[RMDB]
RNA sequence: GGGAACGACUCGAGUAGAGUCGAAAACCUACUCAAUACGUCCUCGUCGUACAGAACGGUAACAUGUUUUCCGAACAUCCGCGCUUGGGUUUACGAGUAUACACCUUACCCAACCCUCGCCAACGGGAGUGCAUCCACGAGUUCGCUCGUGGAUGAAGAGUAGACGUAACUUCGGUUACGUCUACUCAAAAGAAACAACAACAACAAC
Reactivity to 2A3 in 0.01 (KOAc 150mM, MgCl2 10mM, bicine 150mM(pH8.5), 24C), signal-to-noise 4, nucleotides 027 to 156: c000c000u010a020c050u030c050a050a170u060a170c020g030u030c030c030u040c050g070u030c010g020u090a100c060a130g060a160a020c020g030g000u080a070a020c040a170u120g040u090u060u000u020c020c020g030a030a020c020a070u040c020c020g030c010g020c050u030u020g020g000g060u030u030u090a070c050g020a030g100u010a000u050a030c080a070c060c020u070u080a040c000c000c010a040a020c020c000c000u000c000g010c010c030a080a050c020g010g000g020a070g050u040g000c010a000u000c000c000a000c000g010a000g010u050u060c150g020c100u000c000g000u010g000g010a000u000g000a000a000
Reactivity to DMS in 0.01 (KOAc 150mM, MgCl2 10mM, bicine 150mM(pH8.5), 24C), signal-to-noise 1, nucleotides 027 to 156: c020c000u000a130c140u000c020a020a100u000a060c020g000u010c010c010u020c010g070u000c150g020u020a090c120a060g040a140a030c010g030g000u000a170a170c070a190u000g000u010u010u000u000c040c000g010a100a060c040a040u010c010c030g010c030g000c000u030u000g000g000g000u010u000u000a080c100g000a040g020u000a190u000a100c160a120c190c130u000u000a070c020c010c000a040a060c020c010c030u000c210g000c040c040a130a010c010g000g010g010a040g040u020g030c010a010u000c000c000a020c000g010a030g000u000u000c300g060c010u000c010g030u000g000g000a000u000g010a000a060